Chemical mapping of a 177-nucleotide RNA with 2A3 and DMS.
Values cover nucleotides 27 to 126.
It was measured as part of the RMDB library OK1LIB.
Conditions: 150 mM KOAc, 10 mM MgCl2 and 150 mM bicine (pH 8.5), 24 C.
2A3 adducts were read by reverse transcription with SuperScript II with manganese.

RNA sequence: GGGAACGACUCGAGUAGAGUCGAAAACAUACAUCAGAAGUCGGCACAACUCCCGACUCGCGGUGAGCGAUGCAGCGUAGCGCGAGCUACGCAGCUGCUGUGCGGACGGCUAGCAAAAGCUAGCCAAAUAUCCUCCCUCCUUCGGGAGGGAGGAUAUAAAAGAAACAACAACAACAAC
Reactivity to 2A3 in 0.01 (KOAc 150mM, MgCl2 10mM, bicine 150mM(pH8.5), 24C), signal-to-noise 2, nucleotides 027 to 126: c000a020u240a100c040a080u110c030a040g080a170a030g070u040c040g100g030c100a010c030a300a120c120u050c010c010c000g050a030c020u010c020g000c020g000g060u130g030a010g000c020g080a090u130g000c030a030g010c000g000u030a000g000c020g000c030g090a010g000c000u000a010c000g000c030a000g010c040u040g000c000u010g070u070g070c060g040g010a130c060g020g010c000u000a000g000c000a000a190a300a000g000c020u000a000g030c000c000a000a000
Reactivity to DMS in 0.01 (KOAc 150mM, MgCl2 10mM, bicine 150mM(pH8.5), 24C), signal-to-noise 2, nucleotides 027 to 126: c050a130u110a220c060a090u000c040a030g000a190a170g000u000c000g000g060c050a060c090a040a070c220u000c030c000c000g000a100c070u000c040g080c300g000g000u090g000a140g010c100g010a010u000g030c040a040g000c030g000u000a000g000c000g000c300g000a190g000c000u000a000c030g000c030a000g040c050u000g000c140u040g040u000g000c000g010g000a060c070g000g030c000u000a000g000c000a160a070a060a180g000c000u000a000g000c000c000a000a070